[RMDB]
RNA sequence: GGGAACGACUCGAGUAGAGUCGAAAAGGUCGGUACGAAUCCAAAAUCUAUCGUCGCUGACGACUAAUGACAAUUGGUGGCGAUUUUAUGUACUUUAUUCAGUGUGACCGAUUGGGAUACUGCGGAAUCUUUGUUCGUUAUCAUACAGAAUCAAGGAUGUAGUUUCGAUAUUCGUAUCGAAACUACAAAAAGAAACAACAACAACAAC
Reactivity to DMS in 0.01 (KOAc 150mM, MgCl2 10mM, bicine 150mM(pH8.5), 24C), signal-to-noise 3, nucleotides 027 to 156: g010g020u000c000g020g030u010a120c020g010a100a080u000c040c030a070a100a130a110u000c110u000a070u000c050g070u000c020g010c020u000g020a040c050g000a270c100u010a090a130u010g000a160c120a110a080u010u000g000g040u000g010g010c020g030a040u000u000u020u000a030u010g030u000a050c030u000u010u000a060u020u000c060a100g050u020g030u000g010a060c030c000g010a080u000u000g020g030g000a100u000a020c050u000g040c110g050g050a100a180u010c080u000u000u000g020u000u010c060g010u000u000a100u000c040a070u000a150c080a130g020a020a040u000c070a020a060g000g020a220
Reactivity to 2A3 in 0.01 (KOAc 150mM, MgCl2 10mM, bicine 150mM(pH8.5), 24C), signal-to-noise 5, nucleotides 027 to 156: g050g020u050c030g010g030u090a060c050g060a060a070u070c060c040a090a060a030a080u100c070u050a020u010c010g020u000c030g020c120u050g010a030c050g070a030c080u170a170a100u200g050a050c070a070a100u050u090g010g000u010g000g020c000g020a010u040u040u030u080a100u130g060u050a050c000u000u070u040a030u040u050c030a050g020u010g010u030g070a030c040c020g010a020u020u070g020g010g000a010u060a140c020u060g050c120g070g060a050a040u030c010u040u070u110g090u060u020c010g020u030u090a070u100c010a010u050a050c040a050g080a070a030u070c030a050a020g110g010a020